[RMDB]
RNA sequence: GGGAACGACUCGAGUAGAGUCGAAAAGUCUGUGCGUUUCCAUUUGAGUAUCCUGAAAACGGGAUUUUCAGCAUGGAACGUACAUAUUAAAUAGUAGGAGUGCAUAGUGGCCCGUAUAGCAGGCAUUGAGGCGAGGAUUGUUUCGACAAUCCUCGAACGCAAUGUGUGAAUUCGUUCACACAUUGCGAAAAGAAACAACAACAACAAC
Reactivity to 2A3 in 0.01 (KOAc 150mM, MgCl2 10mM, bicine 150mM(pH8.5), 24C), signal-to-noise 3, nucleotides 027 to 156: g060u030c050u030g010u010g010c000g000u010u120u070c000c000a000u020u010u010g000a000g020u020a000u020c010c010u080g110a130a120a110a170c120g020g000g000a000u060u020u020u000c030a040g040c050a010u000g000g000a000a000c000g000u000a000c010a000u010a000u020u130a050a080a080u120a020g070u030a020g010g040a020g030u070g040c040a050u040a080g050u080g050g000c010c020c010g030u090a040u050a090g020c050a010g040g000c030a030u010u110g060a040g050g030c020g000a000g000g000a000u000u000g010u050u110u090c130g050a010c000a000a000u000c000c000u000c000g000a020a000
Reactivity to DMS in 0.01 (KOAc 150mM, MgCl2 10mM, bicine 150mM(pH8.5), 24C), signal-to-noise 3, nucleotides 027 to 156: g010u010c090u020g010u020g000c000g000u010u030u000c010c000a030u000u000u000g000a040g000u000a030u010c010c000u010g000a040a040a090a300c050g040g000g000a080u000u000u000u000c010a020g000c170a010u000g030g000a020a030c000g010u010a010c010a020u000a040u020u000a070a070a130u000a110g000u000a080g000g010a100g050u000g000c050a140u000a120g010u000g000g000c000c020c010g030u000a120u000a100g000c040a040g010g030c030a140u000u000g020a090g010g030c010g020a040g000g010a050u000u000g000u010u000u010c300g010a080c010a020a020u000c010c000u000c000g000a020a090
Structure probing data (2A3 and DMS) for a 207-nucleotide construct.